An RNA of 177 nucleotides, treated with DMS and 2A3 and read out base by base. Values are in units of 0.01, from 0 to 300, in steps of 10.
[RMDB]
RNA sequence: GGGAACGACUCGAGUAGAGUCGAAAAGAUAUGGACCGACUACCCACCACCCUGACCACGACGAAGGCGUUUCGGAAACGAAACGCCAGAGUGGUCUGCGUAGGAUAGGUGAGGUCGGUCCUAAGUCGUUUCUUAACAACUUCGGUUGUUAAGAAACAAAAGAAACAACAACAACAAC
Reactivity to DMS in 0.01 (KOAc 150mM, MgCl2 10mM, bicine 150mM(pH8.5), 24C), signal-to-noise 2, nucleotides 027 to 126: g010a110u020a300u010g000g000a020c000c000g000a040c020u000a290c200c030c010a070c010c000a130c020c050c030u010g000a030c000c010a000c000g020a210c250g000a160a090g010g040c010g000u010u010u000c020g010g010a130a070a280c000g010a070a000a000c000g010c000c000a000g000a070g020u000g000g000u000c030u010g000c240g000u020a140g020g000a180u010a110g020g020u000g010a140g040g020u000c000g000g020u010c010c000u000a000a060g010u000c090
Reactivity to 2A3 in 0.01 (KOAc 150mM, MgCl2 10mM, bicine 150mM(pH8.5), 24C), signal-to-noise 1, nucleotides 027 to 126: g050a030u150a120u230g000g000a000c000c000g010a010c000u150a190c000c050c000a010c000c000a090c010c040c030u000g030a000c000c000a020c130g300a090c010g000a300a030g000g020c040g000u000u000u020c000g020g010a000a110a000c000g000a000a030a020c000g100c000c000a010g000a000g000u000g010g000u040c000u020g020c090g090u160a300g000g050a300u230a240g000g050u090g120a190g020g010u000c000g070g020u020c000c000u000a030a000g030u000c070

Record summary:
For 2A3 the reverse transcriptase was SuperScript II with manganese. For DMS the reverse transcriptase was MarathonRT. For DMS, 1,390 sequencing reads were counted. Conditions: 150 mM KOAc, 10 mM MgCl2 and 150 mM bicine (pH 8.5), 24 C. It was measured as part of the RMDB library TTRINS. Values cover nucleotides 27 to 126.